[RMDB]
RNA sequence: GGGAACGACUCGAGUAGAGUCGAAAAACUUCGGUCUCAGCACUUUAAUUAUUCUUCUCGUUCCCACCUAAUUUCGCAAUUUAUUGUCCUUGACUUCUACCACGAGAAAAAAAUUAAGAAAAUGCAAGGUCCAUGAAGGAUUCGUCCUUCAUGGACCAAAAGAAACAACAACAACAAC
Reactivity to 2A3 in 0.01 (KOAc 150mM, MgCl2 10mM, bicine 150mM(pH8.5), 24C), signal-to-noise 2, nucleotides 027 to 126: a000c020u040u060c000g000g080u070c010u000c050a000g040c040a040c020u010u110u100a070a080u060u060a060u280u030c000u170u060c010u060c010g000u000u010c000c080c000a000c020c020u080a080a070u130u250u000c070g040c090a040a050u000u180u300a100u000u300g140u050c050c050u050u100g020a050c000u030u000c090u070a130c000c000a110c060g000a070g050a060a010a000a000a000a000a000u140u270a080a050g050a060a190a010a000u100g110c010a000a040

The data come from the RNA Mapping Database (RMDB), library RFM100. This 177-nucleotide RNA was probed chemically with 2A3.